An RNA of 177 nucleotides, treated with 2A3 and DMS and read out base by base. The data come from the RNA Mapping Database (RMDB), library RFMREP. The DMS profile rests on 4,023 reads. DMS adducts were read by reverse transcription with MarathonRT. For 2A3 the reverse transcriptase was SuperScript II with manganese.
RNA sequence: GGGAACGACUCGAGUAGAGUCGAAAAAACAAACGUUUUACCGGUUUGUAAAUUGGAAUUCUCGAAUUCGCCAGUCGCCUUCUUCGUAUCAAGGAUCUGGAAUUUGAACGGUAUCUUUAUCAUUUUAGUAUAUGAUACUGUUCGCAGUAUCAUAUACAAAAGAAACAACAACAACAAC
Reactivity to 2A3 in 0.01 (KOAc 150mM, MgCl2 10mM, bicine 150mM(pH8.5), 24C), signal-to-noise 5, nucleotides 027 to 126: a000a000c010a010a020a000c020g010u010u080u020u010a010c000c000g020g030u000u020u010g040u030a080a120a090u070u070g060g070a030a050u040u020c030u010c050g040a100a180u240u120c090g010c040c010a020g050u080c100g110c100c010u040u060c020u120u150c090g080u110a110u270c040a010a000g010g000a020u040c010u010g020g120a030a040u180u100u130g050a030a010c010g010g030u010a020u000c030u120u280u100a200u060c030a080u040u100u030u050a040
Reactivity to DMS in 0.01 (KOAc 150mM, MgCl2 10mM, bicine 150mM(pH8.5), 24C), signal-to-noise 4, nucleotides 027 to 126: a080a040c010a010a010a010c010g000u010u000u000u000a010c040c010g010g010u000u010u000g000u000a030a070a170u010u000g010g010a150a190u010u000c030u000c040g010a070a100u010u000c120g010c020c020a020g010u000c300g000c020c010u000u000c070u000u010c220g000u010a090u010c180a030a030g010g000a120u010c010u000g000g000a060a080u000u010u000g010a040a210c020g000g000u000a010u010c260u010u010u000a090u040c060a090u000u000u000u000a170